[RMDB]
RNA sequence: GGGAACGACUCGAGUAGAGUCGAAAAUAUGCAGCUCAUCUGAGACUGUGACACUGGGCGAGAGAGGAGUUCCAAAGAGGGAGCCUCUUGUAGUUGUGAUACUCAACCUAGCUGGGCCCACUCUAGGUAUUAUGAGCGAAUUCGUUCGCUCAUAAUAAAAAGAAACAACAACAACAAC
Reactivity to DMS in 0.01 (KOAc 150mM, MgCl2 10mM, bicine 150mM(pH8.5), 24C), signal-to-noise 5, nucleotides 027 to 126: u000a120u010g000c000a030g010c030u000c010a220u020c210u010g000a040g010a130c020u000g010u000g000a110c090a060c070u000g010g000g020c010g010a200g000a020g000a020g020g020a060g010u010u000c000c010a140a150a140g020a180g010g010g000a030g010c010c010u000c000u000u010g000u000a140g000u010u000g010u020g000a140u010a070c100u010c070a090a110c010c010u000a020g000c240u010g010g020g020c010c010c010a060c070u000c000u000a010g010g010
Reactivity to 2A3 in 0.01 (KOAc 150mM, MgCl2 10mM, bicine 150mM(pH8.5), 24C), signal-to-noise 1, nucleotides 027 to 126: u260a120u120g010c010a040g000c010u010c000a270u080c230u180g010a020g150a220c010u000g000u000g050a000c030a010c120u060g020g000g000c020g010a080g020a010g010a030g130g000a070g040u100u030c000c020a140a110a000g100a080g030g010g000a000g000c020c010u040c020u000u010g100u040a070g020u060u170g000u020g050a050u040a120c030u060c090a020a000c010c010u010a000g020c070u050g050g080g000c000c030c020a010c010u060c010u030a030g000g000
Description
The record gives the reactivity of an RNA of 177 nucleotides to DMS and 2A3. The RNA was probed in 150 mM KOAc, 10 mM MgCl2 and 150 mM bicine (pH 8.5) at 24 C. It was measured as part of the RMDB library OK2TST. 2A3 is a SHAPE reagent: it acylates the 2'-hydroxyl of flexible nucleotides of all four kinds.